[RMDB]
Structure probing data (DMS and 2A3) for a 207-nucleotide construct. For 2A3 the reverse transcriptase was SuperScript II with manganese. The RNA was probed in 150 mM KOAc, 10 mM MgCl2 and 150 mM bicine (pH 8.5) at 24 C. For DMS, 4,517 sequencing reads were counted.

RNA sequence: GGGAACGACUCGAGUAGAGUCGAAAAGGACUCCGUGAGGAGUCCGUGCAGCGAGAGCUGCACAAGCGGUUAUAGUGAGACGGUCCGCGAGCUCAUCGAUGUGGAGAUGAGCUCUGUAGUAGCCGCACGAUUUAUAGUGCGGCAUACGAGUCUCAGGAUGUAUCAUGUCAUUCGUGACAUGAUACAUAAAAGAAACAACAACAACAAC
Reactivity to DMS in 0.01 (KOAc 150mM, MgCl2 10mM, bicine 150mM(pH8.5), 24C), signal-to-noise 2, nucleotides 027 to 156: g050g020a040c000u000c000c010g050u020g010a250g020g020a000g020u000c000c000g050u000g010c000a040g000c000g030a270g000a300g040c000u000g000c000a040c000a070a100g030c040g010g000u010u000a090u000a110g010u020g010a020g030a030c000g000g020u000c050c030g010c050g000a030g010c030u000c010a000u000c000g000a270u020g080u040g040g000a300g010a030u000g010a030g000c010u000c000u000g020u000a130g000u000a080g020c010c010g000c000a010c000g010a230u020u000u010a170u010a120g010u000g020c000g010g020c000a010u000a000c030g010a150g010u000c010u000c000a100g020g000
Reactivity to 2A3 in 0.01 (KOAc 150mM, MgCl2 10mM, bicine 150mM(pH8.5), 24C), signal-to-noise 3, nucleotides 027 to 156: g000g000a000c000u010c000c000g020u030g010a030g000g000a010g000u000c000c000g000u000g000c000a000g000c000g010a050g010a010g060c000u010g010c010a000c010a000a010g000c000g000g000u040u070a070u060a110g060u050g000a000g000a000c000g000g010u000c000c000g020c000g000a000g000c000u000c000a000u000c010g050a110u110g100u120g170g070a110g000a030u000g000a010g000c000u000c000u000g000u000a020g000u000a010g000c000c000g000c000a000c000g020a040u020u210u080a160u080a050g000u000g010c000g000g000c000a000u000a000c000g010a060g000u010c000u000c000a010g040g030